Source: RMDB library OK1LIB, as collected in RNAgym. Structure probing data (2A3) for a 177-nucleotide construct. The reactions ran in a buffer of 150 mM KOAc, 10 mM MgCl2 and 150 mM bicine (pH 8.5), at 24 C.
RNA sequence: GGGAACGACUCGAGUAGAGUCGAAAAUAGGGAUAUCGAAAGAAAUAGAGGGAACGAUAUCCCGUCUAGUGCUUCCCUCUAUUUCUUUGCACUAGACACGGUGGAGAUGCGAAAGCAUUUCCACCGAGGACCUACUUGGCUUCGGCCAAGUAGGUCCAAAAGAAACAACAACAACAAC
Reactivity to 2A3 in 0.01 (KOAc 150mM, MgCl2 10mM, bicine 150mM(pH8.5), 24C), signal-to-noise 1, nucleotides 027 to 126: u250a050g000g000g010a000u010a000u010c050g050a130a120a090g130a000a160a060u170a070g070a010g030g010g000a050a050c000g000a030u010a000u020c020c000c000g000u000c000u010a000g000u000g000c000u040u070c000c050c020u000c010u030a060u060u100u010c000u040u060u010g010c000a000c000u010a010g010a020c000a000c000g000g000u000g030g000a040g010a000u000g010c050g000a280a000a020g000c000a000u100u000u040c040c000a000c010c000g000a010